[RMDB]
RNA sequence: GGGAACGACUCGAGUAGAGUCGAAAAACUCAUCGCUGCCUCGGUGCGGCAAACUGCCGACGCCAUAGGACACUCGCCGGGUAUCUCACGCGGUGCGUACAUGGCACUGACCGUUCUGGACAUGGUGCGCGAGGGUUCUAUCGUUGACAUCAUCCGCUCCACUGUCAGGAUUCGUCCUGACAGUGGAAAAAGAAACAACAACAACAAC
Reactivity to 2A3 in 0.01 (KOAc 150mM, MgCl2 10mM, bicine 150mM(pH8.5), 24C), signal-to-noise 2, nucleotides 027 to 156: a000c060u060c060a130u100c140g040c040u050g020c010c030u130c070g060g070u150g030c030g020g000c060a060a100a040c110u080g000c000c010g020a080c000g040c090c050a010u020a010g000g000a000c000a010c020u000c000g000c000c000g070g050g030u050a000u020c030u060c030a000c000g010c000g020g000u020g010c000g010u100a070c090a180u210g100g000c000a000c020u040g040a070c030c070g000u070u070c020u030g020g020a010c020a080u150g100g020u150g080c100g000c020g010a010g000g020g000u050u000c000u010a050u140c000g010u020u050g020a030c000a020u090c010a070u010c020c030g050c050

The record gives the reactivity of an RNA of 207 nucleotides to 2A3. Values are in units of 0.01, from 0 to 300, in steps of 10. The RNA was probed in 150 mM KOAc, 10 mM MgCl2 and 150 mM bicine (pH 8.5) at 24 C. Reactivities are given for positions 27 through 156.